[RMDB]
Structure probing data (2A3 and DMS) for a 207-nucleotide construct. The 2A3 profile rests on 7,848 reads. The data come from the RNA Mapping Database (RMDB), library RNAMAK. Reactivities are given for positions 27 through 156. The RNA was probed in 150 mM KOAc, 10 mM MgCl2 and 150 mM bicine (pH 8.5) at 24 C.
RNA sequence: GGGAACGACUCGAGUAGAGUCGAAAAUAAGAUACGCUGGGUUUCAUAGCGUCGUUUGACGAUUGAACUACAAGAUCUGAAGCGCGCACGGAUCUUGCAAUCCGAGACGCGAAACCUGUGCUGAAGCGCGCACGGCAACCGAAAGGUGCGUUCCGAACAUAUCCUUGAAGUUCGCUUCAAGGAUAUGAAAAGAAACAACAACAACAAC
Reactivity to 2A3 in 0.01 (KOAc 150mM, MgCl2 10mM, bicine 150mM(pH8.5), 24C), signal-to-noise 5, nucleotides 027 to 156: u190a020a020g060a050u140a070c010g000c010u020g000g020g020u020u000u020c220a250u290a160g000c010g010u010c010g010u120u260u260g030a010c010g000a010u010u010g010a030a030c040u120a060c300a000a010g010a000u000c000u030g040a220a020g020c000g000c000g000c010a000c000g000g000a000u000c000u000u010g000c000a000a000u000c010c020g040a040g000a050c000g000c000g000a010a000a000c000c000u000g000u000g020c000u000g020a110a030g000c000g000c000g000c010a000c000g010g000c000a010a010c010c000g070a080a040a030g010g000u000g000c000g000u060u000c010c010g020a110a020
Reactivity to DMS in 0.01 (KOAc 150mM, MgCl2 10mM, bicine 150mM(pH8.5), 24C), signal-to-noise 3, nucleotides 027 to 156: u000a100a140g030a170u020a010c040g030c010u000g000g000g030u000u030u000c030a170u010a300g050c000g040u000c000g040u010u020u000g030a170c170g000a060u000u010g000a080a100c020u010a300c010a000a020g000a020u000c010u010g020a050a030g010c000g020c010g010c000a300c020g000g010a000u010c010u010u000g010c000a040a020u000c000c030g000a140g010a300c010g040c000g000a090a020a050c000c000u000g020u000g000c000u000g010a110a090g000c050g020c020g000c010a300c030g010g020c020a040a060c020c010g020a080a130a130g010g020u000g010c030g020u010u010c020c040g000a290a240